Chemical mapping of a 177-nucleotide RNA with 2A3 and DMS. For DMS, 655 sequencing reads were counted. The RNA was probed in 150 mM KOAc, 10 mM MgCl2 and 150 mM bicine (pH 8.5) at 24 C.
RNA sequence: GGGAACGACUCGAGUAGAGUCGAAAACACCUAACGUUCGCGUUAGGUGAAACAUGCAAGUAAACCUGGAUCGACGCAUCAUGAAGAACCAGGAGAAAUAAAAAACGACAGGGUUCGCCCUGUCGAAGUAACAAAAAUUCUUCGGAAUUUUUGUUACAAAAGAAACAACAACAACAAC
Reactivity to 2A3 in 0.01 (KOAc 150mM, MgCl2 10mM, bicine 150mM(pH8.5), 24C), signal-to-noise 1, nucleotides 027 to 126: c000a010c010c000u000a000a000c000g000u000u070c250g000c000g100u000u000a000g000g010u000g000a000a000a000c120a050u260g070c050a110a060g000u150a150a130a020c000c000u000g000g000a040u020c010g010a030c010g000c080a210u150c060a080u300g020a030a060g000a030a040c000c010a000g000g060a030g020a010a060a030u170a030a140a010a040a010a000c010g010a010c000a000g040g020g080u100u170c190g110c010c010c010u000g000u000c000g000a010a000
Reactivity to DMS in 0.01 (KOAc 150mM, MgCl2 10mM, bicine 150mM(pH8.5), 24C), signal-to-noise 1, nucleotides 027 to 126: c010a000c000c000u000a010a000c000g010u000u010c210g050c010g030u000u010a000g000g030u000g010a030a050a060c100a070u020g010c220a120a180g030u010a030a040a120c020c000u000g000g000a090u000c000g000a260c110g020c070a100u000c240a050u010g040a040a190g010a010a100c000c000a000g010g030a070g000a090a060a030u000a020a070a080a120a060a220c010g010a010c010a010g000g000g000u010u010c260g020c000c000c020u000g000u000c000g000a040a120